Source information
The record gives the reactivity of an RNA of 177 nucleotides to DMS. Conditions: 150 mM KOAc, 10 mM MgCl2 and 150 mM bicine (pH 8.5), 24 C. The data come from the RNA Mapping Database (RMDB), library OK1LIB.
RNA sequence: GGGAACGACUCGAGUAGAGUCGAAAAAUAUGCCACGGCACUUCAAGCUGCUAGUCAAGAACGUGGAGACAGACCGCGCUCGGAAGAUGAGAUGGACCUUUGGGCUGGAUGGGCGGAGGUCGAGUUCUAAUACGGCUCCAUUCGUGGAGCCGUAUUAAAAAGAAACAACAACAACAAC
Reactivity to DMS in 0.01 (KOAc 150mM, MgCl2 10mM, bicine 150mM(pH8.5), 24C), signal-to-noise 3, nucleotides 027 to 126: a090u050a120u000g020c010c010a110c040g010g040c040a060c030u020u010c080a110a140g040c080u020g000c050u020a060g000u030c020a100a090g010a100a120c060g000u010g000g000a090g030a080c240a180g030a080c020c050g010c020g010c110u000c000g000g000a140a100g000a030u010g000a080g020a060u010g010g010a060c030c010u010u010u030g010g000g040c040u000g000g000a120u050g020g010g000c040g010g020a090g030g000u020c060g000a090g000u010u020c040